Structure probing data (DMS and 2A3) for a 177-nucleotide construct. The reactions ran in a buffer of 150 mM KOAc, 10 mM MgCl2 and 150 mM bicine (pH 8.5), at 24 C.

RNA sequence: GGGAACGACUCGAGUAGAGUCGAAAAAAGUGAAUCGUAUUCCAUGAAUAUGAUAUCUAUCUAGUGUGAUGUAUGGAAUAUAUGACAAAGGUGGAUCUAUUGAUCGGUCAUGUCAUAUAGGCCCGAGUAUUAUGCUCACGUUCGCGUGAGCAUAAUAAAAAGAAACAACAACAACAAC
Reactivity to DMS in 0.01 (KOAc 150mM, MgCl2 10mM, bicine 150mM(pH8.5), 24C), signal-to-noise 4, nucleotides 027 to 126: a060a060g000u000g000a040a040u000c010g010u000a020u000u010c000c170a180u060g010a020a000u000a020u010g000a020u010a100u000c020u000a110u020c030u010a140g020u010g020u010g000a040u000g000u020a060u010g000g000a050a070u000a000u000a000u000g010a000c000a040a080a130g010g000u020g000g010a010u000c020u010a170u020u030g010a010u000c000g010g000u000c010a120u010g010u000c010a020u000a020u000a000g000g000c020c020c060g000a140g000
Reactivity to 2A3 in 0.01 (KOAc 150mM, MgCl2 10mM, bicine 150mM(pH8.5), 24C), signal-to-noise 4, nucleotides 027 to 126: a000a000g250u140g010a030a030u030c010g000u010a000u060u000c030c080a090u300g000a000a000u000a000u000g030a010u080a140u010c070u010a060u020c050u080a100g090u060g090u030g230a130u080g100u200a170u170g000g030a030a000u020a010u000a000u010g000a010c020a030a120a040g140g030u100g190g000a010u000c030u040a230u300u300g010a000u020c010g000g050u020c020a020u020g000u000c000a000u000a000u000a020g020g030c010c020c000g000a010g020